[RMDB]
RNA sequence: GGGAACGACUCGAGUAGAGUCGAAAAUUCCAUAUUUGUAGACUGGCGGUCAUACAAUUAUGCUGUGUCUAGUGCCUUCUGGUUAUUCACCCACAUUCCAAUGGCGGGUUUGGUACGAAUGUAUAAUACAUUACAACAACUUCGGUUGUUGUAAUGUAAAAGAAACAACAACAACAAC
Reactivity to 2A3 in 0.01 (KOAc 150mM, MgCl2 10mM, bicine 150mM(pH8.5), 24C), signal-to-noise 1, nucleotides 027 to 126: u050u000c020c000a000u040a050u100u150u070g060u020a000g010a030c010u050g150g010c070g020g000u080c000a010u060a150c010a050a070u060u060a050u190g000c030u040g000u000g020u110c020u040a020g010u000g030c000c010u060u120c040u060g000g050u050u090a070u090u130c010a050c010c010c000a010c000a050u140u000c040c030a090a060u020g020g000c040g000g000g010u030u080u140g020g000u010a020c050g040a060a040u090g080u050a080u010a140a070u040
Reactivity to DMS in 0.01 (KOAc 150mM, MgCl2 10mM, bicine 150mM(pH8.5), 24C), signal-to-noise 2, nucleotides 027 to 126: u010u010c010c000a100u010a080u000u000u010g010u000a030g000a080c030u000g010g030c130g010g020u000c080a070u000a040c110a060a040u000u010a030u010g000c080u000g000u000g020u000c060u000a100g010u000g010c030c010u000u010c070u000g030g010u010u000a100u010u010c090a090c050c020c030a070c110a080u010u000c100c110a100a090u010g010g020c080g010g000g000u000u010u000g020g020u010a030c070g010a060a050u000g010u000a050u010a100a180u000
An RNA of 177 nucleotides, treated with 2A3 and DMS and read out base by base. For 2A3, 983 sequencing reads were counted. Source: RMDB library 15KREP, as collected in RNAgym. 2A3 adducts were read by reverse transcription with SuperScript II with manganese.